[RMDB]
RNA sequence: GGGAACGACUCGAGUAGAGUCGAAAACUCGCUCAAACAUACAGAGAUGUUGUGCGACAUGAAUCUCUCUGCAUUAGAAUGGUCGAAGAAUCAGCGGCAAUUCGAGACCGAAUUAGAAGCCGCAUUAACAGCUUUGGAACACGCCUUGCUGACGUGAAUUUACUGACCUCUUCGGAGGUCAGUAAAUAAAAGAAACAACAACAACAAC
Reactivity to 2A3 in 0.01 (KOAc 150mM, MgCl2 10mM, bicine 150mM(pH8.5), 24C), signal-to-noise 2, nucleotides 027 to 156: c000u000c020g000c000u010c080a010a110a140c000a000u130a020c050a110g130a010g020a030u020g050u070u040g010u000g030c000g050a010c020a110u200g060a140a140u080c070u010c010u000c030u130g020c040a140u050u090a060g080a230a150u130g020g000u000c000g030a070a000g020a030a020u000c120a080g000c000g000g010c040a030a000u010u000c000g010a040g000a060c010c010g050a020a060u170u020a130g070a170a030g010c000c000g010c000a010u070u130a080a040c010a000g080c070u220u200u240g000g020a060a020c000a000c070g030c000c040u030u050g020c070u000g030a020c050g060u030g050a060
Reactivity to DMS in 0.01 (KOAc 150mM, MgCl2 10mM, bicine 150mM(pH8.5), 24C), signal-to-noise 1, nucleotides 027 to 156: c030u000c030g000c040u030c060a120a090a070c090a130u000a130c030a000g030a130g010a040u020g000u010u000g000u000g000c020g000a110c170a170u010g030a070a120u010c070u000c040u000c000u000g000c030a090u010u000a070g000a150a130u000g020g030u000c000g000a210a180g060a030a110u000c170a070g090c010g010g010c000a020a110u000u000c000g000a300g010a170c110c010g000a030a030u010u000a270g030a130a100g000c000c000g000c070a130u010u000a040a020c040a040g020c020u000u010u000g000g000a150a190c010a060c010g020c020c030u010u000g030c220u000g000a040c030g000u010g050a150
This 207-nucleotide RNA was probed chemically with 2A3 and DMS.
The DMS profile rests on 1,630 reads.
For 2A3 the reverse transcriptase was SuperScript II with manganese.
For DMS the reverse transcriptase was MarathonRT.
The 2A3 profile rests on 690 reads.